[RMDB]
RNA sequence: GGGAACGACUCGAGUAGAGUCGAAAAACCUUUGUGGCUUGUCAGAAGUAGUGAUGAGGAUAAUCCCAUUGGGAUUAUCUCCCCACCAUCACAAAACUUCUUGGAUUUAGCCACUCUGGUAAAUCGUACUCGUCAUCUUCGGAUGACGAGUACGAAACAAUAGGACAACGUUCGCGUUGUCCUAUUGAAAAGAAACAACAACAACAAC
Reactivity to DMS in 0.01 (KOAc 150mM, MgCl2 10mM, bicine 150mM(pH8.5), 24C), signal-to-noise 2, nucleotides 027 to 156: a030c000c010u000u000u010g020u010g010g010c010u000u000g000u000c010a020g010a050a040g080u000a300g050u000g000a010u000g010a270g020g010a090u000a010a010u000c010c000c010a300u000u000g040g050g010a030u000u000a000u000c030u000c110c050c020c030a300c060c000a030u010c040a080c040a030a070a070a100c010u000u000c000u000u020g030g020a060u000u000u000a040g030c010c000a010c020u010c040u010g010g010u000a040a070a110u010c020g050u010a000c000u000c010g020u010c000a010u000c020u000u000c300g030g010a010u000g000a000c010g010a000g020u000a000c000g000a010a030a150
Reactivity to 2A3 in 0.01 (KOAc 150mM, MgCl2 10mM, bicine 150mM(pH8.5), 24C), signal-to-noise 5, nucleotides 027 to 156: a000c010c000u020u000u020g000u000g010g010c000u010u050g000u000c000a000g000a000a000g010u160a020g010u020g000a000u010g000a010g030g000a000u000a010a000u000c000c020c090a200u190u300g010g000g000a000u000u000a010u010c020u040c020c010c000c000a030c020c000a000u000c000a000c000a020a200a050a030c000u000u010c000u020u110g120g010a030u300u160u170a000g000c000c000a000c000u000c000u000g010g000u050a080a100a050u040c000g000u010a000c000u000c000g000u000c000a010u000c010u030u050c190g120g000a000u000g010a000c000g000a000g000u000a000c000g000a000a000a000